[RMDB]
RNA sequence: GGGAACGACUCGAGUAGAGUCGAAAAGAUAUGGACGGUUCGAGCUUGGAUUUAAUAUAUAGCUUAUGUUGUCGGAAACGACAACUAAGAGCUAUAUAUUUGUCAGCUCCAGAACCGUCCUAAGUCACUGUUACGUAGUGUUCGCACUACGUAACAGAAAAGAAACAACAACAACAAC
Reactivity to DMS in 0.01 (KOAc 150mM, MgCl2 10mM, bicine 150mM(pH8.5), 24C), signal-to-noise 2, nucleotides 027 to 126: g000a070u000a300u000g000g000a020c000g030g000u000u000c010g010a000g010c010u010u030g020g010a030u000u010u000a020a000u000a010u010a000u000a000g010c000u000u000a300u010g000u000u000g010u010c030g000g010a140a090a290c000g010a000c000a010a000c000u000a100a210g000a000g000c000u000a000u000a010u000a010u000u000u000g010u010c010a060g000c010u000c030c220a190g000a000a000c000c060g000u000c000c000u000a000a160g020u000c030a200
Reactivity to 2A3 in 0.01 (KOAc 150mM, MgCl2 10mM, bicine 150mM(pH8.5), 24C), signal-to-noise 2, nucleotides 027 to 126: g050a010u090a030u180g000g010a000c010g000g000u040u020c020g030a030g000c060u220u300g240g000a160u300u300u100a040a000u000a000u000a000u000a000g000c000u080u030a110u300g000u010u020g000u000c000g000g030a050a090a090c010g010a000c000a000a010c010u020a130a000g020a000g000c000u000a000u000a000u010a000u000u000u020g020u000c000a000g040c000u050c060c010a010g000a020a010c000c010g000u000c010c000u000a000a010g000u000c020a010
Source: RMDB library TTRINS, as collected in RNAgym. An RNA of 177 nucleotides, treated with DMS and 2A3 and read out base by base. For 2A3, 2,684 sequencing reads were counted. The DMS profile rests on 1,443 reads. For 2A3 the reverse transcriptase was SuperScript II with manganese. DMS adducts were read by reverse transcription with MarathonRT.